[RMDB]
RNA sequence: GGGAACGACUCGAGUAGAGUCGAAAAUGUCCACAUGGGAGGCUCACUGGUGUCUCCGGGGACUCGGACAUGCCCAUGUGGACGAGGCCUGCAUGUCCUGGUGUCCUCAGCCACGGCUGUUCGCACAUCGUCAAACUAUUUUCGAAUAGUUUGACGAAAAAGAAACAACAACAACAAC
Reactivity to 2A3 in 0.01 (KOAc 150mM, MgCl2 10mM, bicine 150mM(pH8.5), 24C), signal-to-noise 4, nucleotides 027 to 126: u140g000u000c010c000a010c000a020u030g000g000g000a050g040g020c030u020c080a120c110u120g100g010u060g090u050c020u000c060c030g010g030g000g000a040c050u020c050g000g030a020c010a060u140g010c000c000c010a010u030g000u010g010g000a010c010g000a030g000g050c010c020u030g040c050a070u070g020u030c020c020u030g030g030u040g030u050c000c010u030c030a010g010c020c000a020c030g040g000c020u040g050u040u070c040g000c030a050c020a130
Reactivity to DMS in 0.01 (KOAc 150mM, MgCl2 10mM, bicine 150mM(pH8.5), 24C), signal-to-noise 6, nucleotides 027 to 126: u000g010u000c000c000a020c020a020u000g010g010g010a120g010g010c120u000c080a130c110u010g010g010u010g000u010c040u000c070c090g010g000g010g010a050c050u000c100g010g000a030c040a050u010g010c010c010c030a030u000g020u000g020g000a010c010g010a070g010g010c080c030u000g010c050a040u000g000u000c030c020u010g020g010u010g010u000c020c020u000c040a120g000c040c020a070c180g020g000c030u010g010u000u000c070g000c100a090c180a140
Chemical mapping of a 177-nucleotide RNA with 2A3 and DMS. Source: RMDB library OK2TST, as collected in RNAgym. Reactivities are given for positions 27 through 126. The reactions ran in a buffer of 150 mM KOAc, 10 mM MgCl2 and 150 mM bicine (pH 8.5), at 24 C. For DMS, 10,937 sequencing reads were counted.